[RMDB]
RNA sequence: GGGAACGACUCGAGUAGAGUCGAAAAGAUUAAGUGGGAGCGUCGCCCUCUCGGUGCAUCGGAUAUUAAUUAGCCAGUGCGUGGCACUACGCAUAUUGAUGUCUACUUUGGCGUAGACUGUGCCAAUUUAAGGAUUGUUGGGCAAUCCAGCCCUAGAGAUUACGAUCAUAUUCGUAUGAUCGUAAUCAAAAGAAACAACAACAACAAC
Reactivity to DMS in 0.01 (KOAc 150mM, MgCl2 10mM, bicine 150mM(pH8.5), 24C), signal-to-noise 3, nucleotides 027 to 156: g020a160u010u010a040a100g010u000g020g020g010a080g000c040g020u000c060g000c010c020c020u000c030u000c050g020g050u000g020c030a050u010c040g000g010a070u000a070u010u000a030a160u000u010a130g020c030c020a090g020u000g000c020g040u000g040g010c030a190c010u010a080c060g000c030a140u000a100u000u000g000a150u010g010u000c050u000a070c030u000u000u010g030g010c120g040u000a030g010a040c030u010g010u010g020c040c020a040a120u000u000u000a140a140g020g000a130u010u000g010u010u000g000g000g050c060a080a070u000c080c080a140g000c020c030c020u000a080g000a280
Reactivity to 2A3 in 0.01 (KOAc 150mM, MgCl2 10mM, bicine 150mM(pH8.5), 24C), signal-to-noise 6, nucleotides 027 to 156: g060a040u160u220a090a050g030u100g010g030g000a070g000c040g050u060c020g030c010c020c010u040c010u010c020g050g000u060g010c020a040u060c070g050g010a020u030a040u160u130a160a070u090u080a030g010c020c020a030g010u030g020c050g030u070g010g040c030a020c050u080a020c020g020c020a020u040a090u150u160g110a100u120g020u010c010u010a020c010u110u150u180g090g010c040g010u010a000g020a020c040u030g020u010g020c010c030a040a040u120u150u120a110a060g060g010a100u020u040g050u080u090g010g010g000c000a010a020u080c010c030a040g030c000c000c000u050a050g010a000